Annotation:
This 177-nucleotide RNA was probed chemically with DMS and 2A3. Reactivities are given for positions 27 through 126.
[RMDB]
RNA sequence: GGGAACGACUCGAGUAGAGUCGAAAACUAGGAUCGUUCGCGAUCCUAGAAAGGCGCGGCACCGUCCGCGGAACAAACGGCAAAACAAGAAAGUGAGCAUAAAAAUCAUCAGCUUCGGCUGAUGAAAGACUAUUGUGUCGUUCGCGACACAAUAGUCAAAAGAAACAACAACAACAAC
Reactivity to DMS in 0.01 (KOAc 150mM, MgCl2 10mM, bicine 150mM(pH8.5), 24C), signal-to-noise 2, nucleotides 027 to 126: c000u000a000g020g000a020u010c000g060u000u010c230g040c000g040a000u000c000c000u000a000g020a050a160a090g010g000c020g050c020g000g030c010a300c040c020g030u020c010c000g040c000g010g040a000a240c150a030a010a010c000g000g000c120a050a040a060a150c170a080a100g000a000a040a060g000u000g000a090g020c080a080u010a010a040a070a100a120u030c000a010u000c000a000g000c010u000u000c260g020g010c010u000g000a020u000g010a020a080a080
Reactivity to 2A3 in 0.01 (KOAc 150mM, MgCl2 10mM, bicine 150mM(pH8.5), 24C), signal-to-noise 2, nucleotides 027 to 126: c010u000a000g020g000a000u010c000g020u060u040c120g000c000g110a000u000c000c010u010a000g000a000a020a020g070g010c000g030c000g000g000c020a010c050c010g150u150c000c000g000c000g050g050a000a000c010a000a020a010c020g020g060c070a000a060a000a050c100a020a040g150a210a130a010g100u150g050a030g060c020a090u150a140a150a010a020a000u010c000a010u000c000a000g000c020u040u020c180g110g030c000u000g000a000u010g000a000a020a000
Source: RMDB library M2PK50, as collected in RNAgym. The RNA was probed in 150 mM KOAc, 10 mM MgCl2 and 150 mM bicine (pH 8.5) at 24 C. For DMS, 1,007 sequencing reads were counted. The 2A3 profile rests on 2,298 reads.